[RMDB]
Chemical mapping of a 207-nucleotide RNA with DMS and 2A3. For DMS the reverse transcriptase was MarathonRT. Source: RMDB library OK3TST, as collected in RNAgym. 2A3 adducts were read by reverse transcription with SuperScript II with manganese. The DMS profile rests on 5,482 reads.

RNA sequence: GGGAACGACUCGAGUAGAGUCGAAAAAUAUUUUUAAGAUCAAGUCAAGUGUGUCAGGGGUUGGCUGUGUGUGUGUAUAAAUUUGGAUGCUUGUAUAGACCUAGAAUACAGGUUAAACAUUCAAAUGAUCUUUCAAUUAACUGAUUGUAUGUGUGUAGUAUUACCACCUAUUCGUAGGUGGUAAUACAAAAGAAACAACAACAACAAC
Reactivity to DMS in 0.01 (KOAc 150mM, MgCl2 10mM, bicine 150mM(pH8.5), 24C), signal-to-noise 2, nucleotides 027 to 156: a120u010a040u010u000u000u000u020a030a100g010a090u000c030a070a120g020u010c050a060a100g020u010g010u010g020u000c020a080g010g010g020g030u010u000g010g040c050u000g030u000g010u000g020u000g030u000g020u040a060u010a060a080a080u000u000u010g000g000a020u000g030c030u020u000g030u010a180u000a140g010a040c020c010u000a150g010a150a140u000a100c080a090g020g040u000u000a050a050a050c010a040u000u010c020a000a030a060u010g010a130u000c020u000u000u000c040a040a140u010u010a050a140c080u000g010a090u000u000g000u000a070u000g000u010g020u000g020u010a130
Reactivity to 2A3 in 0.01 (KOAc 150mM, MgCl2 10mM, bicine 150mM(pH8.5), 24C), signal-to-noise 3, nucleotides 027 to 156: a000u040a040u000u130u040u090u130a100a030g010a070u120c050a030a030g020u040c040a060a070g010u020g010u020g020u070c040a040g000g010g020g020u070u080g040g000c100u010g010u010g010u000g010u010g000u000g050u010a060u060a100a130a050u020u030u000g000g000a020u050g000c030u040u050g060u050a050u050a110g060a060c000c050u020a030g100a080a050u150a100c030a020g000g000u020u070a010a020a000c000a000u010u020c010a010a020a050u020g020a050u030c010u050u110u060c040a030a140u060u130a130a070c070u070g060a170u110u010g020u060a190u040g020u000g010u020g050u030a020